[RMDB]
RNA sequence: GGGAACGACUCGAGUAGAGUCGAAAACGAUGAGGGGAGAAGAGAAGUGGCCAGGUGGGUCGAAGACGCCCGCCCCAAGGCGCACGCCCGUCGCGUGUUUGCAUGCGGGGGUCAGACCCCCUUACCGCGCAUAGCAUCCAUUCGUGGAUGCUAUGCGAAAAGAAACAACAACAACAAC
Reactivity to 2A3 in 0.01 (KOAc 150mM, MgCl2 10mM, bicine 150mM(pH8.5), 24C), signal-to-noise 1, nucleotides 027 to 126: c050g050a070u130g030a050g000g010g060g000a070g000a100a030g060a020g000a170a000g030u040g040g000c000c040a010g010g020u090g020g040g000u020c040g120a130a000g080a030c040g200c050c000c000g000c000c010c010c010a040a060g070g000c050g010c010a010c010g000c000c020c070g180u140c040g000c000g000u080g020u020u210u300g090c000a010u090g000c000g000g000g000g000g000u000c000a010g000a030c000c000c010c000c000u000u040a010c010c030g010
Reactivity to DMS in 0.01 (KOAc 150mM, MgCl2 10mM, bicine 150mM(pH8.5), 24C), signal-to-noise 2, nucleotides 027 to 126: c070g000a050u010g000a070g020g000g000g000a040g000a170a060g010a060g010a070a090g020u000g010g020c010c030a120g000g020u010g000g010g010u000c030g010a110a110g010a070c230g000c000c000c000g020c000c170c160c090a070a100g020g010c020g010c010a010c020g000c040c080c190g010u030c130g030c010g020u000g010u000u000u000g020c020a050u020g020c000g010g000g010g020g000u000c030a090g000a230c020c000c010c000c000u000u010a010c070c060g000